[RMDB]
RNA sequence: GGGAACGACUCGAGUAGAGUCGAAAACGGUCCUGCCAUGAGACCCUAACGAGGACAUGUCGCCUCGAAUGGCGUCGGGGAGCCGGCAGCUUACCCCAAGGAUGAGCGCCUAAUGCCGGUACCCGGGUAUACGCUACCCCGUUCGCGGGGUAGCGAAAGGUAUAUGUACGUUCGCGUACAUAUACCUAAAAGAAACAACAACAACAAC
Reactivity to DMS in 0.01 (KOAc 150mM, MgCl2 10mM, bicine 150mM(pH8.5), 24C), signal-to-noise 1, nucleotides 027 to 156: c080g020g030u000c080c040u000g000c020c070a090u000g020a170g010a080c010c010c010u000a100a110c030g010a020g030g030a070c050a140u000g010u010c120g010c000c000u010c030g010a080a040u010g000g010c000g060u000c020g000g000g000g000a300g010c000c000g000g020c000a140g010c020u000u000a060c030c010c010c130a190a170g030g000a050u010g000a030g000c020g040c160c090u020a120a070u000g040c000c030g000g000u000a030c000c000c020g040g020g000u000a120u010a060c060g020c000u000a030c030c030c030c010g060u000u040c280g040c080g000g000g050g000u000a010g020c000g010a000a040
Reactivity to 2A3 in 0.01 (KOAc 150mM, MgCl2 10mM, bicine 150mM(pH8.5), 24C), signal-to-noise 3, nucleotides 027 to 156: c020g010g020u010c000c010u000g000c010c010a040u050g010a020g000a030c020c020c010u100a020a000c010g010a000g000g030a020c060a190u240g100u130c120g020c030c000u000c000g000a000a010u000g000g000c010g090u050c010g000g020g000g000a090g160c000c000g000g010c010a010g000c000u010u020a040c000c010c020c170a090a150g060g030a220u090g010a020g000c020g080c020c050u090a150a060u050g000c000c000g010g010u010a020c000c000c010g000g000g030u270a200u020a030c030g010c010u000a000c000c000c000c000g020u020u020c090g030c020g080g000g010g000u000a000g000c000g000a010a010